[RMDB]
RNA sequence: GGGAACGACUCGAGUAGAGUCGAAAAUGGCUUCUCCUGGGCGAUCGCUCGCUGUUUUAGUGGCUGGCUUUCAGCGGGCUGGAGGAGCCGGGAGCGGAGGCGGAGGACCGAGCCAAAAACGUCAGCCUAUAGAGGAAGCUGUUCGCAGCUUCCUCAAACCCUAUGGAAGAUUCGUCUUCCAUAGGGUAAAAGAAACAACAACAACAAC
Reactivity to 2A3 in 0.01 (KOAc 150mM, MgCl2 10mM, bicine 150mM(pH8.5), 24C), signal-to-noise 1, nucleotides 027 to 156: u080g000g000c010u000u020c000u010c010c010u060g030g100g070c030g060a070u110c060g000c000u020c020g020c010u010g090u010u050u030u110a090g000u090g070g000c030u020g020g030c010u090u030u020c000a020g000c010g000g010g000c020u040g000g010a010g000g010a000g000c000c000g030g010g000a050g110c100g020g030a020g000g030c040g030g040a080g040g020a010c030c020g000a020g030c040c030a100a060a000a000a000c040g020u010c000a000g010c000c010u070a110u110a080g000a000g000g000a000a000g000c000u020g030u080u160c210g000c070a000g000c000u010u000c000c000u000c000a000a000
Chemical mapping of a 207-nucleotide RNA with 2A3. For 2A3 the reverse transcriptase was SuperScript II with manganese. The RNA was probed in 150 mM KOAc, 10 mM MgCl2 and 150 mM bicine (pH 8.5) at 24 C. It was measured as part of the RMDB library M2RFPK.